RNA sequence: GGGAACGACUCGAGUAGAGUCGAAAACAUAGGUGUAUGGUCACAUUUUUUUCUGUGCGACCGCAGGGGCAGGCAGAGCAAGAUGAUCCACAUCCACCUGUUCCUUUCUUGCAGAACUCCAACCCCGCAGUAUGGGCCGUUUCGACGGCCCAUACUGAAAAGAAACAACAACAACAAC
Reactivity to 2A3 in 0.01 (KOAc 150mM, MgCl2 10mM, bicine 150mM(pH8.5), 24C), signal-to-noise 2, nucleotides 027 to 126: c050a030u300a110g000g000u040g090u080a100u180g010g000u080c030a010c010a130u050u050u050u000u000u090u210c080u060g000u020g020c030g010a040c030c000g040c120a000g040g000g020g050c020a000g020g030c010a010g020a020g060c030a030a070g000a050u010g040a020u060c110c000a080c000a050u000c000c000a000c000c010u000g040u010u090c000c000u040u070u000c070u000u140g000c010a000g020a020a040c050u040c010c000a040a040c000c000c000c000g000